[RMDB]
RNA sequence: GGGAACGACUCGAGUAGAGUCGAAAAUCCUUGAUGGGGGCCUGAGAUGACAGAAAAACUACCUCGGGGAUAACUGGGUGGUCGCAGGCAAGAGCCCAUAUCGACCCUGCGGCUUGCUACUUCGAUGACAGAGUCUGAAUUUCGAUUCAGACUCUGUAAAAGAAACAACAACAACAAC
Reactivity to 2A3 in 0.01 (KOAc 150mM, MgCl2 10mM, bicine 150mM(pH8.5), 24C), signal-to-noise 2, nucleotides 027 to 126: u010c010c000u010u030g100a170u070g020g010g000g010g040c000c000u030g050a040g040a120u060g000a050c040a040g150a040a140a020a020a000c040u080a100c000c040u020c010g000g000g000g000a030u030a140a170c050u050g010g010g010u030g000g000u000c000g000c010a010g030g000c010a000a000g010a000g050c060c060c080a030u110a080u070c020g000a030c000c060c000u020g000c000g000g000c010u030u160g000c010u020a120c030u040u090c020g040a070u070g040
Reactivity to DMS in 0.01 (KOAc 150mM, MgCl2 10mM, bicine 150mM(pH8.5), 24C), signal-to-noise 4, nucleotides 027 to 126: u010c010c010u000u010g030a060u000g010g010g000g000g030c020c020u000g020a080g000a110u020g000a100c070a100g000a140a070a070a100a090c070u000a120c040c010u000c030g000g010g000g000a110u020a070a090c140u010g000g010g010u000g000g030u000c010g000c000a020g000g000c050a050a260g010a070g010c130c080c110a070u020a120u000c010g010a300c300c010c000u020g000c000g010g000c000u000u000g020c020u000a080c120u000u000c020g010a250u020g010